[RMDB]
RNA sequence: GGGAACGACUCGAGUAGAGUCGAAAAGGACUGACGAAUCUUGGGAAGGGAUCGACGAUCUCUCGGAGCAUAAGGCUAUAUUUGACGAGAUCGAUAAUCGGCUGUCUCAAAUCGCCAAUAUCCUCGAUAAGCAUGCUGACCCAGCGAUGGCGGUACCUCACGGGACCUAUUUCGAUAGGUCCCGUGAAAAAGAAACAACAACAACAAC
Reactivity to 2A3 in 0.01 (KOAc 150mM, MgCl2 10mM, bicine 150mM(pH8.5), 24C), signal-to-noise 1, nucleotides 027 to 156: g000g000a090c000u000g050a010c020g070a070a070u170c110u180u170g000g000g000a020a000g120g000g030a090u160c050g010a000c040g000a000u000c000u020c000u000c000g000g010a000g070c000a120u160a220a050g110g000c110u070a020u000a060u080u160u170g030a070c130g000a010g000a050u090c030g030a060u150a150a050u190c020g020g000c140u090g110u100c000u000c090a000a210a080u050c030g000c000c000a000a000u010a030u070c000c000u000c040g110a200u060a090a000g120c120a070u190g000c030u030g070a100c010c010c150a010g040c030g100a070u120g000g300c070g000g000u000a070c000c000